[RMDB]
RNA sequence: GGGAACGACUCGAGUAGAGUCGAAAAUGUGGAAGUCCUGAUCGGGGCGGAAGCAUUAAAACCAUUCGAGCUAGUCAAUGCGUGGCGUGUCUCUCCGCAGCGUGUUGGCGAAUGUAAAGAGUGACUAUUGACCACGCAACGUUCGCGUUGCGUGGAAGAAAUUAUGUGUGUUCGCACACAUAAUUUCAAAAGAAACAACAACAACAAC
Reactivity to DMS in 0.01 (KOAc 150mM, MgCl2 10mM, bicine 150mM(pH8.5), 24C), signal-to-noise 3, nucleotides 027 to 156: u010g030u000g020g000a300a300g040u000c010c040u000g000a150u000c160g030g000g010g030c010g010g000a300a270g000c010a060u000u000a030a120a030a050c050c000a100u000u000c040g000a060g020c010u000a090g010u010c010a040a020u000g010c080g060u000g030g030c010g080u010g030u000c060u010c060u000c150c020g050c030a090g000c020g040u000g000u030u030g010g000c030g000a050a040u000g030u000a100a070a090g000a060g030u000g020a100c060u010a130u000u010g010a180c010c000a030c000g000c000a030a020c020g010u020u000c230g060c120g000u000u000g010c000g060u000g000g020a000a050
Reactivity to 2A3 in 0.01 (KOAc 150mM, MgCl2 10mM, bicine 150mM(pH8.5), 24C), signal-to-noise 6, nucleotides 027 to 156: u010g000u020g010g010a010a010g010u020c010c010u150g080a300u230c210g000g000g000g010c010g000g000a000a000g000c000a000u000u020a010a020a000a030c020c010a020u060u090c080g030a030g030c040u070a020g010u000c000a000a000u000g000c010g020u030g120g000c010g000u010g010u000c000u000c000u000c000c020g000c020a050g000c010g000u020g020u010u000g000g010c010g000a010a020u070g030u130a030a020a000g010a000g000u010g000a000c010u050a110u140u230g070a070c000c000a000c030g000c010a000a000c000g020u070u090c210g000c000g090u000u000g000c000g000u000g000g000a000a000